Source: RMDB library PDB130, as collected in RNAgym. An RNA of 207 nucleotides, treated with DMS and 2A3 and read out base by base. The RNA was probed in 150 mM KOAc, 10 mM MgCl2 and 150 mM bicine (pH 8.5) at 24 C.
RNA sequence: GGGAACGACUCGAGUAGAGUCGAAAACCAUAAUGUCCAUUGGAUUCUUAGGUUUUAUUGUAUGGGCUCACCACAUAUUCACCGUAGGAAUAGACGUAGAUACCCGAGCAUACUUUACAUCUGCUACAAUAAUCAUUGCUAUUCCCACUGGAGUAAACCCAUGUAGUACCUUCGGGUACUACAUGGGAAAAGAAACAACAACAACAAC
Reactivity to DMS in 0.01 (KOAc 150mM, MgCl2 10mM, bicine 150mM(pH8.5), 24C), signal-to-noise 1, nucleotides 027 to 156: c040c020a180u000a060a090u000g000u000c060c070a290u000u000g000g010a130u010u000c040u000u000a110g020g000u010u000u000u000a050u020u000g050u010a060u000g010g030g000c000u020c160a100c050c010a080c060a040u000a050u000u000c040a080c040c020g060u000a060g020g000a070a040u010a050g010a080c020g060u010a060g000a110u020a000c000c050c010g000a250g030c010a060u000a010c050u000u010u010a090c050a110u000c080u010g010c010u010a070c040a050a050u010a130a110u000c110a190u010u000g000c020u010a130u000u000c010c010c010a060c030u020g060g010a140g000u000a100a130a140
Reactivity to 2A3 in 0.01 (KOAc 150mM, MgCl2 10mM, bicine 150mM(pH8.5), 24C), signal-to-noise 4, nucleotides 027 to 156: c000c000a030u150a090a070u130g010u000c000c020a060u040u110g050g030a040u140u090c060u110u180a190g080g000u070u080u080u080a110u030u100g060u090a090u110g010g010g000c050u070c030a040c040c000a060c020a100u110a090u100u150c060a000c080c060g030u040a010g000g020a010a000u000a030g050a050c060g020u010a040g000a040u070a080c030c070c070g020a010g000c010a040u100a200c020u120u170u080a060c060a050u080c040u040g000c000u030a060c070a060a070u090a070a010u050c060a070u030u150g020c010u030a010u040u000c000c030c040a030c070u090g010g000a010g010u070a020a050a060